[RMDB]
RNA sequence: GGGAACGACUCGAGUAGAGUCGAAAACACUAUAUCAGCAAAUAGCCACUGAGCAGCUACAACAGGCACCUGUGAUGCCCUUGGAAUAAGAAAAACACCUCCCUUGCCUCAGAGGUUUGGGAAGAUCAAAUGAAACAGAGGAUGGGAAAGGGAAAUAACCAGUUUUAUUAUUCGUAAUAAAACUGGUAAAAGAAACAACAACAACAAC
Reactivity to 2A3 in 0.01 (KOAc 150mM, MgCl2 10mM, bicine 150mM(pH8.5), 24C), signal-to-noise 2, nucleotides 027 to 156: c070a020c060u180a080u050a060u300c050a010g040c030a030a120a130u050a080g010c030c000a080c080u050g040a050g040c040a010g000c050u070a060c030a160a010c030a090g040g020c040a020c040c050u110g020u080g060a100u040g010c010c010c000u020u070g020g030a070a040u130a140a060g070a010a070a030a030a020c020a040c020c010u010c030c000c000u000u060g080c010c000u020c000a050g050a050g180g000u030u040u030g010g000g010a070a010g020a020u060c020a000a030a100u150g060a050a000a020c020a020g020a010g030g000a040u060g010g000g020a050a020a040g030g030g050a120a090a000u170a030
Reactivity to DMS in 0.01 (KOAc 150mM, MgCl2 10mM, bicine 150mM(pH8.5), 24C), signal-to-noise 2, nucleotides 027 to 156: c060a160c040u000a090u000a090u000c040a040g020c060a050a100a110u000a150g000c030c050a120c030u000g000a100g030c070a100g010c050u000a020c040a070a080c050a050g010g010c000a010c020c020u000g000u000g010a040u000g000c030c000c000u000u020g020g030a110a120u000a070a130g000a070a070a060a080a100c030a070c030c010u000c000c000c000u000u000g010c000c000u000c080a120g000a220g000g020u000u000u000g010g000g000a080a080g000a060u000c060a050a050a120u000g010a150a060a110c070a110g000a050g020g060a070u010g010g010g010a030a080a070g010g000g010a040a050a100u000a130

Source information:
Structure probing data (2A3 and DMS) for a 207-nucleotide construct. For 2A3, 2,246 sequencing reads were counted. Reactivities are given for positions 27 through 156. The DMS profile rests on 3,971 reads. 2A3 adducts were read by reverse transcription with SuperScript II with manganese.